This 207-nucleotide RNA was probed chemically with 2A3.
The RNA was probed in 150 mM KOAc, 10 mM MgCl2 and 150 mM bicine (pH 8.5) at 24 C.
It was measured as part of the RMDB library RSTRND.
RNA sequence: GGGAACGACUCGAGUAGAGUCGAAAACCGAAACGCCUCUUAUAGGUUCGAGCGUCUGUGAUUUGACUCCGUUAAGGAUUGCAGACUUAACCCCAACGGAUGCACUAGCUCACUGCCUCUGGUCGGCUGCUGGUUAAGACUUCACCGGAGAAUCCCGCCUAUCUGGCAAGUUCGCUUGCCAGAUAGGAAAAGAAACAACAACAACAAC
Reactivity to 2A3 in 0.01 (KOAc 150mM, MgCl2 10mM, bicine 150mM(pH8.5), 24C), signal-to-noise 2, nucleotides 027 to 156: c000c010g020a050a060a020c050g000c030c010u090c070u180u220a150u120a260g010g000u110u060c090g030a030g010c020g070u120c160u090g070u040g030a100u000u160u250g070a060c020u010c040c030g030u020u050a150a080g010g020a050u050u150g070c090a030g060a160c000u050u170a100a070c000c010c000c030a010a000c020g000g000a000u060g020c020a020c030u050a020g000c010u000c020a060c110u080g000c000c010u050c070u040g030g040u030c040g020g020c010u060g030c020u040g000g030u020u010a060a000g000a030c030u070u030c120a000c020c030g000g000a040g000a040a050u010c000c010c000g000